[RMDB]
RNA sequence: GGGAACGACUCGAGUAGAGUCGAAAAGGGAACUUCAGGAGAAAGAAGAGUGAAGUCUACUCUGCCGAUUAUUGCAAAAUGAAAAUCGAAAAGAUGGGCCUGGUUUUUGCACUUGGUGGGAUAGGGGGGUAGGACGUUCGUUCGCGAACGUCCUACCAAAAGAAACAACAACAACAAC
Reactivity to 2A3 in 0.01 (KOAc 150mM, MgCl2 10mM, bicine 150mM(pH8.5), 24C), signal-to-noise 1, nucleotides 027 to 126: g000g000g100a000a000c000u060u000c030a030g000g020a040g070a130a100a000g040a110a000g000a060g000u000g010a110a000g030u000c040u180a200c000u040c040u040g000c110c040g010a120u100u000a080u170u280g040c010a000a000a210a000u130g170a010a010a000a060u000c010g140a100a000a000a270g000a000u210g000g000g000c240c100u200g140g030u000u120u000u270u000g010c010a000c010u040u000g000g020u140g010g000g100a060u100a130g000g000g000g070
Chemical mapping of a 177-nucleotide RNA with 2A3.